Structure probing data (2A3 and DMS) for a 177-nucleotide construct.
Reactivities are rounded to 0.1 and cut off at 0 and 3.
[RMDB]
RNA sequence: GGGAACGACUCGAGUAGAGUCGAAAAGAUAUGGAAUAUGUAACGGGAGCACUAUUGGCGUUUGACGUCAUUCGGAAACGAAUGACCGAGCCAAGUAGUGCGAAGAACGUUACAUAUUCCUAAGUCAUCUUGUAAAAUCGUUCGCGAUUUUACAAGAAAAAGAAACAACAACAACAAC
Reactivity to 2A3 in 0.01 (KOAc 150mM, MgCl2 10mM, bicine 150mM(pH8.5), 24C), signal-to-noise 1, nucleotides 027 to 126: g050a000u090a010u180g000g000a040a000u020a000u000g010u020a030a000c000g020g010g080a090g050c000a010c020u020a020u040u020g020g020c080g110u080u290u300g090a060c080g020u000c000a000u010u040c000g010g020a060a090a110c000g000a000a020u000g030a010c000c000g030a030g000c000c000a000a000g120u100a000g010u020g020c000g010a020a010g010a000a000c020g000u000u000a000c000a000u010a020u010u020c000c000u000a020a000g030u000c020a100
Reactivity to DMS in 0.01 (KOAc 150mM, MgCl2 10mM, bicine 150mM(pH8.5), 24C), signal-to-noise 3, nucleotides 027 to 126: g000a050u010a300u010g010g010a010a020u000a010u000g000u000a000a010c010g000g020g000a150g010c000a010c000u000a030u000u000g000g000c010g020u010u010u020g030a170c300g000u000c000a000u000u000c010g000g020a110a110a200c000g000a010a010u000g000a000c000c020g000a060g000c000c000a030a020g010u000a000g010u000g000c000g000a090a130g000a100a130c000g020u000u000a000c010a000u000a000u000u000c000c000u000a000a040g000u000c060a130